[RMDB]
RNA sequence: GGGAACGACUCGAGUAGAGUCGAAAAAAGGUGUGGGCCAGACAAGGCCUUGGAGCCCACACAUGGGAUCAAGUCCUGCAAGCAGAGGUGGCGAUUUGUUAAAGGGCCAAAAGUAUCCAAGGUUAGGCAACCACGCCAUAUUCGUAUGGCGUGGUUGAAAAGAAACAACAACAACAAC
Reactivity to DMS in 0.01 (KOAc 150mM, MgCl2 10mM, bicine 150mM(pH8.5), 24C), signal-to-noise 1, nucleotides 027 to 126: a040a090g000g020u010g020u000g030g000g020c000c130a140g010a080c150a150a040g000g010c000c000u020u000g000g000a100g020c000c010c000a000c050a000c030a040u020g030g000g010a070u000c130a080a070g000u000c010c010u000g040c140a080a110g010c110a070g020a080g000g000u010g010g050c030g010a100u000u010u010g040u010u000a030a060a070g020g000g000c060c080a070a020a050a080g000u020a070u010c000c000a030a050g000g010u010u000a100g030g010